Conditions: 150 mM KOAc, 10 mM MgCl2 and 150 mM bicine (pH 8.5), 24 C. An RNA of 177 nucleotides, treated with DMS and 2A3 and read out base by base. 2A3 adducts were read by reverse transcription with SuperScript II with manganese. For DMS, 1,238 sequencing reads were counted. DMS adducts were read by reverse transcription with MarathonRT.

[RMDB]
RNA sequence: GGGAACGACUCGAGUAGAGUCGAAAAGACGCAGAUUGCUGAGAGGGUAGGAAUUUUACAAAUCGAUGUGACAUUGGCUGUUGGCUACAUCGCUAGCGCGGCUGUGGGACCAGCUAGAGUAGGCCAACUGGUACGCCCUAUUCGUAGGGCGUACCAGAAAAGAAACAACAACAACAAC
Reactivity to DMS in 0.01 (KOAc 150mM, MgCl2 10mM, bicine 150mM(pH8.5), 24C), signal-to-noise 1, nucleotides 027 to 126: g010a120c070g020c060a050g010a090u000u000g000c070u000g010a050g000a100g010g000g020u000a060g000g020a060a060u000u010u000u000a130c150a040a100a130u000c040g000a050u000g010u000g010a120c110a080u010u010g020g020c030u000g000u000u000g000g010c010u010a040c060a110u000c060g010c050u000a020g010c070g000c110g010g020c040u000g010u000g020g010g010a190c050c010a090g000c010u000a020g010a060g020u000a100g000g000c010c010a020a040
Reactivity to 2A3 in 0.01 (KOAc 150mM, MgCl2 10mM, bicine 150mM(pH8.5), 24C), signal-to-noise 2, nucleotides 027 to 126: g020a000c040g000c060a010g040a230u060u140g060c020u060g040a040g030a030g070g050g010u070a020g000g130a100a050u070u190u060u070a120c090a030a060a030u080c040g010a020u030g030u020g080a020c050a110u040u080g110g000c040u050g010u050u010g050g000c010u030a040c050a160u060c030g040c000u030a010g040c030g020c060g040g000c030u170g030u060g050g040g030a040c010c010a000g020c000u000a010g020a040g020u090a020g000g070c080c010a000a010